[RMDB]
RNA sequence: GGGAACGACUCGAGUAGAGUCGAAAAGCACGUAGGUUCAGAUGAUGGGCCCGCAUCGGUACGAAAGUAAGACGAAAGUCCAGCCUACGUGCAUGAGCACGCGGGCCCCGUGCUCUACUGCAAAAGAGAUAUCAGCCUGCUUCGGCAGGCUGAUAUCAAAAGAAACAACAACAACAAC
Reactivity to 2A3 in 0.01 (KOAc 150mM, MgCl2 10mM, bicine 150mM(pH8.5), 24C), signal-to-noise 1, nucleotides 027 to 126: g000c000a000c000g000u000a010g030g040u120u230c090a030g010a180u090g000a000u140g180g000g000c000c020c010g000c000a010u000c020g020g090u110a020c050g060a150a080a000g060u030a000a020g050a040c000g020a110a000a000g010u020c000c000a000g000c010c000u000a000c000g000u000g000c000a000u000g000a010g010c000a070c050g010c090g010g010g000c010c010c000c000g000u030g000c000u020c000u040a030c000u020g160c050a000a030a080a000g050a040
The record gives the reactivity of an RNA of 177 nucleotides to 2A3.
It was measured as part of the RMDB library OK1LIB.
The 2A3 profile rests on 897 reads.
The reactions ran in a buffer of 150 mM KOAc, 10 mM MgCl2 and 150 mM bicine (pH 8.5), at 24 C.
Reactivities are rounded to 0.1 and cut off at 0 and 3.
Values cover nucleotides 27 to 126.